[RMDB]
RNA sequence: GGGAACGACUCGAGUAGAGUCGAAAACAUCUGCGAUUCGUCGCAGAUGAAAAAGAUAUGGACCGCGUCUCCCCCACUCAACAGCCUACAUCGGAAACGAUGUAGGACAUGAGUAGACCGGUCCUAAGUCAAAAAGGUCUCAGUUCGCUGAGACCAACGUGAUUAACUUAUUCGUAAGUUAAUCACGAAAAGAAACAACAACAACAAC
Reactivity to 2A3 in 0.01 (KOAc 150mM, MgCl2 10mM, bicine 150mM(pH8.5), 24C), signal-to-noise 1, nucleotides 027 to 156: c000a010u020c000u020g010c000g040a020u050u100c230g040u020c000g190c000a010g020a010u030g050a000a000a000a000a000g020a000u040a020u090g000g000a000c000c020g060c300g150u060c070u190c000c040c000c090c010a090c070u040c050a130a130c000a080g010c000c000u000a000c000a030u010c000g010g000a000a000a000c010g000a000u010g000u010a000g000g000a000c000a090u090g000a010g000u020a000g010a010c000c000g020g000u000c000c000u000a000a000g000u000c040a000a000a010a070a190g030g000u020c010u000c000a040g050u030u170c250g040c100u000g020a010g000a000c000c000a000a010
Reactivity to DMS in 0.01 (KOAc 150mM, MgCl2 10mM, bicine 150mM(pH8.5), 24C), signal-to-noise 2, nucleotides 027 to 156: c000a020u000c010u000g020c000g010a050u000u000c300g040u000c010g040c000a010g020a010u010g000a020a050a080a140a110g000a120u000a170u000g000g000a000c010c000g030c260g000u010c020u000c020c040c000c080c070a130c080u010c010a080a090c060a240g030c000c020u010a000c010a020u030c030g020g030a100a050a240c040g010a020u000g020u000a000g040g010a010c010a040u000g000a020g040u000a060g030a010c000c010g030g000u000c010c000u000a020a040g000u000c010a050a100a060a180a080g050g030u000c010u000c010a010g010u010u010c290g010c060u000g000a010g020a000c000c020a000a030
This 207-nucleotide RNA was probed chemically with 2A3 and DMS. The 2A3 profile rests on 1,874 reads. It was measured as part of the RMDB library RNAMAK. Conditions: 150 mM KOAc, 10 mM MgCl2 and 150 mM bicine (pH 8.5), 24 C.